[RMDB]
RNA sequence: GGGAACGACUCGAGUAGAGUCGAAAAUUUUUCCUGUAGAAAGGGGCUUAGGAUAAUGAUUUCAGCUUUAUUGAGGGCAGAUUAGUAGCAGUCUCGAUGCUGCCUCUCAAUACGCGCUGUACAUGCCUCCAUGAGCGUUGUUCGCAACGCUCAUGGAAAAAGAAACAACAACAACAAC
Reactivity to DMS in 0.01 (KOAc 150mM, MgCl2 10mM, bicine 150mM(pH8.5), 24C), signal-to-noise 2, nucleotides 027 to 126: u000u010u020u020u000c000c040u020g020u050a090g000a010a120a050g000g010g010g000c220u010u010a100g000g000a050u020a120a070u020g000a220u020u000u010c040a020g000c000u000u010u010a000u010u010g000a010g020g000g000c000a000g000a040u010u030a160g030u010a100g020c070a040g000u030c020u000c040g000a030u070g040c000u000g000c000c000u080c010u030c000a010a000u000a020c140g010c270g040c000u020g000u030a050c060a030u020g050c000c040
Reactivity to 2A3 in 0.01 (KOAc 150mM, MgCl2 10mM, bicine 150mM(pH8.5), 24C), signal-to-noise 2, nucleotides 027 to 126: u110u070u000u000u000c030c000u020g040u040a010g130a060a130a020g100g000g050g000c040u060u080a040g000g050a100u140a240a120u240g020a080u070u070u170c000a000g030c010u050u000u020a000u000u000g000a000g000g010g000c000a000g000a110u000u180a000g140u120a000g060c090a020g100u030c050u020c100g030a050u190g090c000u000g000c000c010u180c000u000c000a000a000u000a000c000g070c000g010c040u000g060u040a000c000a050u060g040c000c030